Structure probing data (2A3 and DMS) for a 207-nucleotide construct. For 2A3, 3,423 sequencing reads were counted. The DMS profile rests on 3,349 reads.

RNA sequence: GGGAACGACUCGAGUAGAGUCGAAAAACUCCUAUUCCAACACGUCCUCGUCGUACAGAGUGGUAACAUGUGUCACCACAUAUCCAAGCUUAGGUACACGGGCUUGACCCAACCCCUUGGGCGGAUGAAAACCAGAUUACGUUCGCGUAAUCUGGAACUAACGAAUACCGUUCGCGGUAUUCGUUAGAAAAGAAACAACAACAACAAC
Reactivity to 2A3 in 0.01 (KOAc 150mM, MgCl2 10mM, bicine 150mM(pH8.5), 24C), signal-to-noise 4, nucleotides 027 to 156: a000c070u050c020c010u040a080u080u070c030c020a060a050c050a030c090g030u030c020c010u040c050g090u030c030g000u060a030c010a040g100a030g080u030g030g020u100a100a050c070a120u130g080u070g070u160c030a040c070c000a020c020a040u050a040u040c020c010a060a030g030c050u070u090a070g010g060u050a050c030a020c040g000g000g000c000u050u110g080a180c000c000c010a010a070c010c010c010c000u010u020g030g000g000c030g030g000a060u090g070a060a060a010a050c000c000a000g010a000u000u000a000c000g010u040u050c240g000c010g070u000a000a000u000c000u010g000g000a000a010
Reactivity to DMS in 0.01 (KOAc 150mM, MgCl2 10mM, bicine 150mM(pH8.5), 24C), signal-to-noise 2, nucleotides 027 to 156: a070c090u000c010c000u000a070u000u030c030c010a030a130c100a130c050g020u000c020c000u020c030g000u000c080g010u000a120c080a180g010a130g000u000g030g000u000a040a020c020a210u010g010u020g000u000c050a060c030c000a050c010a190u000a060u000c040c020a070a160g030c020u000u000a070g010g000u000a170c040a070c090g020g000g140c060u000u000g000a100c020c000c050a050a090c050c000c050c090u070u000g020g030g000c050g010g030a160u000g000a060a080a130a230c000c000a010g000a030u010u000a000c010g030u000u000c290g020c020g000u000a000a000u000c000u010g010g000a010a070
The data come from the RNA Mapping Database (RMDB), library M2RFPK.